[RMDB]
RNA sequence: GGGAACGACUCGAGUAGAGUCGAAAACACGUCCUCGGGUUCAAGCAGGCUGGGGGCCAGCAGCAGAGCGCCCGCGAUGGCCGCGCUGCCGAGCGACUGUCGCCCGCCUUCCCGCGUCGCUGCGAUGGGGAAGGUAACUGUUCGCAGUUACCUUCCCAAAAGAAACAACAACAACAAC
Reactivity to DMS in 0.01 (KOAc 150mM, MgCl2 10mM, bicine 150mM(pH8.5), 24C), signal-to-noise 2, nucleotides 027 to 126: c060a100c170g000u000c010c010u010c030g000g000g000u030u000c130a090a090g030c040a140g010g020c030u010g030g000g000g000g000c020c020a060g000c060a120g000c090a110g010a140g010c060g030c060c040c000g000c140g020a070u020g000g010c050c000g030c080g030c010u000g020c010c010g010a090g000c070g000a040c020u010g000u000c050g010c020c020c040g000c050c040u000u000c000c010c010g010c140g040u000c030g000c070u010g000c040g010a160u000g000
Reactivity to 2A3 in 0.01 (KOAc 150mM, MgCl2 10mM, bicine 150mM(pH8.5), 24C), signal-to-noise 1, nucleotides 027 to 126: c020a020c060g030u000c040c020u020c020g010g030g000u090u090c070a110a040g020c010a020g100g000c010u110g020g000g060g100g020c000c060a060g010c030a020g030c010a020g070a040g090c080g060c000c000c000g080c050g100a130u170g050g000c030c000g000c090g020c000u080g000c020c010g030a000g000c100g020a030c000u020g020u000c010g060c020c000c010g060c010c020u060u000c010c020c000g030c020g020u080c030g030c090u150g000c030g100a090u130g140
Conditions: 150 mM KOAc, 10 mM MgCl2 and 150 mM bicine (pH 8.5), 24 C.
The record gives the reactivity of an RNA of 177 nucleotides to DMS and 2A3.
For 2A3 the reverse transcriptase was SuperScript II with manganese.
The DMS profile rests on 1,491 reads.